The data come from the RNA Mapping Database (RMDB), library OK2TST. Structure probing data (2A3 and DMS) for a 177-nucleotide construct. In probing experiments dimethyl sulfate is read out at A N1 and C N3, which are open when not base-paired. The reactions ran in a buffer of 150 mM KOAc, 10 mM MgCl2 and 150 mM bicine (pH 8.5), at 24 C. High 2A3 reactivity points to a flexible backbone, as in loops and unpaired stretches.

RNA sequence: GGGAACGACUCGAGUAGAGUCGAAAAUGUAGCUAAGUACCGUUCAAUAGGAGCUGUUUUAGGGUCAAAGCCGUUUCCUGAUCGGUAGGUCCACUCAUCUUUGUUAAUGCCUUUGGCCUUUACUACAAUGGCGUAUGCCAUUCGUGGCAUACGCCAUAAAAGAAACAACAACAACAAC
Reactivity to 2A3 in 0.01 (KOAc 150mM, MgCl2 10mM, bicine 150mM(pH8.5), 24C), signal-to-noise 1, nucleotides 027 to 126: u080g020u030a050g010c060u060a040a040g150u010a030c010c060g000u010u020c100a140a090u110a280g170g000a010g000c000u010g000u020u020u010u110a060g050g010g000u100c030a030a010a000g030c000c020g060u050u120u020c000c000u080g010a020u030c000g010g040u040a100g030g100u000c000c000a040c020u010c010a080u000c060u000u230u050g040u080u040a100a010u060g010c010c000u050u030u070g000g000c000c000u040u050u120a050c030u020a020c000a060
Reactivity to DMS in 0.01 (KOAc 150mM, MgCl2 10mM, bicine 150mM(pH8.5), 24C), signal-to-noise 1, nucleotides 027 to 126: u010g000u010a020g010c070u000a080a100g020u000a040c030c030g000u000u000c050a180a110u000a160g000g000a050g030c020u000g000u000u000u000u000a050g010g010g000u000c060a060a040a040g000c070c030g000u000u000u000c020c010u000g000a030u000c050g010g010u000a050g000g000u000c070c100a070c050u000c050a030u000c060u000u000u000g000u010u000a060a030u000g010c210c000u000u010u000g010g000c020c020u010u000u000a050c070u010a060c120a080
For DMS the reverse transcriptase was MarathonRT.